[RMDB]
RNA sequence: GGGAACGACUCGAGUAGAGUCGAAAACCAAUGGGAAACCAUUGGCAACUCGGAAACGAGUUGAACGCGGAAUUAGGAUAGAAACGCGCGACAAUGCGAUUUUAAGCAUUGUCGAUUACGCCCAUGUCGAUUUUAAGACAUGGAGCGAACUAUCCAAGCAUGUAUGUCCGUUCGCGGACGUGCAUGCAAAAGAAACAACAACAACAAC
Reactivity to 2A3 in 0.01 (KOAc 150mM, MgCl2 10mM, bicine 150mM(pH8.5), 24C), signal-to-noise 6, nucleotides 027 to 156: c000c000a000a000u000g000g000g010a040a010a010c000c000a000u000u000g000g000c000a000a000c000u000c000g010g030a050a030a020c000g000a000g000u000u000g020a080a010c000g000c000g000g040a080a070u070u040a090g000g000a000u000a000g030a020a090a000c000g000c000g000c000g000a000c000a000a000u000g000c020g060a110u010u050u030u230a060a010g000c000a000u000u000g000u000c000g000a000u000u010a020c000g000c000c000c000a000u000g000u000c010g030a070u020u060u030u280a070a010g000a000c000a000u000g000g000a010g000c000g000a000a010c000u000a000u000c000c000a000a000
Reactivity to DMS in 0.01 (KOAc 150mM, MgCl2 10mM, bicine 150mM(pH8.5), 24C), signal-to-noise 4, nucleotides 027 to 156: c000c000a020a010u010g010g000g000a270a160a280c000c000a000u020u000g010g010c030a020a020c000u000c000g020g000a120a160a210c010g020a060g000u000u000g000a090a070c040g000c000g020g020a150a240u000u010a150g020g010a030u000a020g010a070a100a060c050g000c070g000c010g000a030c000a010a020u000g020c000g010a270u010u000u030u000a110a300g020c000a010u020u000g010u000c010g010a040u000u000a050c010g030c000c010c000a020u000g000u000c010g020a270u000u000u000u010a080a090g000a000c000a000u000g000g000a010g000c000g000a010a020c000u000a000u000c000c000a020a210